[RMDB]
RNA sequence: GGGAACGACUCGAGUAGAGUCGAAAACGUGGCGAACGAGAGAUGGGACCCAUCUGCCAGGUUUGCGCUGCAGGCUCCGGCUGCAGCCAGGAACCGCUCCUGCGCAUCUCGCAGAAGCUCGGAGCUGGGACCCAGUAAAUUUCGAUUUACUGGGUCCAAAAGAAACAACAACAACAAC
Reactivity to 2A3 in 0.01 (KOAc 150mM, MgCl2 10mM, bicine 150mM(pH8.5), 24C), signal-to-noise 4, nucleotides 027 to 126: c060g030u050g050g000c020g040a100a080c040g040a090g030a000g010a150u050g020g160g120a090c010c030c000a030u000c020u040g110c020c010a060g040g030u020u020u060g090c090g000c020u010g010c020a030g080g000c000u000c020c030g060g000c000u030g010c020a010g020c000c000a010g030g010a020a050c060c050g030c080u030c010c000u040g000c010g010c050a170u060c060u070c090g000c000a030g010a110a010g020c030u050c020g030g000a020g000c020u040g030
Reactivity to DMS in 0.01 (KOAc 150mM, MgCl2 10mM, bicine 150mM(pH8.5), 24C), signal-to-noise 2, nucleotides 027 to 126: c120g010u010g000g030c030g010a160a070c060g000a110g000a040g000a020u000g050g020g000a140c240c000c030a020u040c010u000g000c010c070a050g000g030u000u020u000g000c080g000c000u010g000c020a040g000g000c020u030c040c040g030g000c030u020g000c030a100g030c000c030a020g000g010a030a090c150c150g000c080u000c020c030u000g020c100g010c190a190u020c100u020c040g000c020a020g000a040a050g010c050u000c040g010g010a060g000c150u000g040

The record gives the reactivity of an RNA of 177 nucleotides to 2A3 and DMS. Reactivities are given for positions 27 through 126. For DMS the reverse transcriptase was MarathonRT. For DMS, 3,642 sequencing reads were counted. The 2A3 profile rests on 3,411 reads.